[RMDB]
An RNA of 177 nucleotides, treated with DMS and read out base by base. Reactivities are rounded to 0.1 and cut off at 0 and 3. The DMS profile rests on 2,693 reads. Conditions: 150 mM KOAc, 10 mM MgCl2 and 150 mM bicine (pH 8.5), 24 C.
RNA sequence: GGGAACGACUCGAGUAGAGUCGAAAAGGAGCUUGAUUCGUCAAGCUCCAAAAGUUACAGACCCGAUUCCUAGGGUAAACAAGAACCUAUGCACCGAGGCAAAAAGGAAUGGAUUCGUCCAUUCCAACUUGGUUAGUAACUUCGGUUACUAACCAAGAAAAGAAACAACAACAACAAC
Reactivity to DMS in 0.01 (KOAc 150mM, MgCl2 10mM, bicine 150mM(pH8.5), 24C), signal-to-noise 3, nucleotides 027 to 126: g000g010a000g030c000u000u010g000a000u000u020c210g020u000c000a000a000g010c000u010c000c000a020a010a040a070g000u010u010a060c150a150g000a090c000c000c000g000a160u000u000c010c020u000a200g010g000g020u000a060a060a040c080a110a070g000a100a070c040c030u000a040u010g020c080a060c060c050g020a040g020g010c070a050a080a050a110a080g000g000a020a000u000g000g000a030u000u000c190g010u000c000c000a010u000u000c000c000a020a060